[RMDB]
RNA sequence: GGGAACGACUCGAGUAGAGUCGAAAAUCAGUUGCUUCUAUUAACAGGUCUCCUAGGCUAUUAGGAUUUUUCUCUUUUUUAUACAGUCUUGACCCAAUUACUUCAAAAGUUGGAAUUAUGGAAGUGACUCUUCCCUCUUUUUCGAAAGAGGGAAGAGAAAAGAAACAACAACAACAAC
Reactivity to DMS in 0.01 (KOAc 150mM, MgCl2 10mM, bicine 150mM(pH8.5), 24C), signal-to-noise 2, nucleotides 027 to 126: u000c080a170g040u000u000g010c010u000u000c010u000a050u010u020a050a100c230a080g000g010u010c020u010c110c140u010a050g020g000c040u000a060u020u010a070g000g000a060u000u020u030u030u010c080u000c010u010u040u000u000u000u030a070u020a110c080a030g020u010c010u020u000g020a110c030c000c010a070a080u000u000a020c050u010u020c110a050a120a070a140g000u000u020g000g000a090a150u000u010a060u000g000g000a020a010g020u000g000a070
An RNA of 177 nucleotides, treated with DMS and read out base by base. It was measured as part of the RMDB library OK2TST.